The data come from the RNA Mapping Database (RMDB), library RFM100. This 177-nucleotide RNA was probed chemically with 2A3. Values cover nucleotides 27 to 126. For 2A3 the reverse transcriptase was SuperScript II with manganese.
RNA sequence: GGGAACGACUCGAGUAGAGUCGAAAAUAAUAUACGCUGAAUGGAAUCCAGCUAAGUACCCGAUUGCAUGACCAUUACCGCAAAGAAGAACACAACGCGCCCCUACAAUAACACUUCGCGAGGUAUUGACGACUAAUUUGUUCGCAAAUUAGUCGUCAAAAGAAACAACAACAACAAC
Reactivity to 2A3 in 0.01 (KOAc 150mM, MgCl2 10mM, bicine 150mM(pH8.5), 24C), signal-to-noise 2, nucleotides 027 to 126: u120a030a050u120a000u000a070c080g000c000u010g070a060a010u080g060g030a040a070u020c000c000a000g000c010u020a010a010g050u080a120c000c000c030g050a000u130u070g000c050a020u020g000a030c000c010a030u000u090a080c030c010g010c080a130a100a000g070a040a000g050a120a010c000a000c000a160a070c050g040c000g060c120c000c000c010u130a060c070a080a030u090a000a010c050a000c060u120u060c050g030c030g040a010g110g020u110a020u080u000